The data come from the RNA Mapping Database (RMDB), library M2PK50.
Structure probing data (DMS and 2A3) for a 177-nucleotide construct.
DMS (dimethyl sulfate) methylates the pairing face of unpaired adenines and cytosines.
For 2A3, 1,349 sequencing reads were counted.
For DMS, 874 sequencing reads were counted.
Reactivities are given for positions 27 through 126.
Conditions: 150 mM KOAc, 10 mM MgCl2 and 150 mM bicine (pH 8.5), 24 C.
RNA sequence: GGGAACGACUCGAGUAGAGUCGAAAAGCUCAGGGGUUCGCCCCUGAGCAAAAGAUACCGGUCUCGGUAUCAAAGACAGUCCGACAGACCACAGGGAACUGAAAAGGGAGGGGUUCGCCCCUCCCAAGUAGUCGUAUAACUUCGGUUAUACGACUACAAAAGAAACAACAACAACAAC
Reactivity to DMS in 0.01 (KOAc 150mM, MgCl2 10mM, bicine 150mM(pH8.5), 24C), signal-to-noise 1, nucleotides 027 to 126: g000c000u000c020a010g010g000g000g020u000u000c290g020c000c000c000c000u000g000a010g000c010a000a020a050a130g000a020u000a010c000c010g030g000u010c220u000c020g000g000u000a000u000c010a060a130a100g000a130c080a020g000u000c000c000g000a150c060a090g020a140c010c010a080c060a080g000g000g010a100a050c050u010g010a090a090a100a140g000g000g020a000g030g000g010g030u000u000c140g010c000c000c000c000u000c000c000c000a000a020
Reactivity to 2A3 in 0.01 (KOAc 150mM, MgCl2 10mM, bicine 150mM(pH8.5), 24C), signal-to-noise 1, nucleotides 027 to 126: g010c000u010c020a010g090g030g050g040u030u080c200g110c030c000c000c000u010g000a010g000c000a000a000a010a000g000a000u020a000c000c040g080g170u230c270u160c280g000g040u010a000u020c010a000a000a000g070a020c010a000g040u000c000c000g020a020c040a040g040a060c020c030a030c040a110g070g010g000a130a100c060u030g010a040a050a120a130g000g000g010a000g010g030g010g000u010u050c060g060c000c000c000c000u000c010c000c010a000a000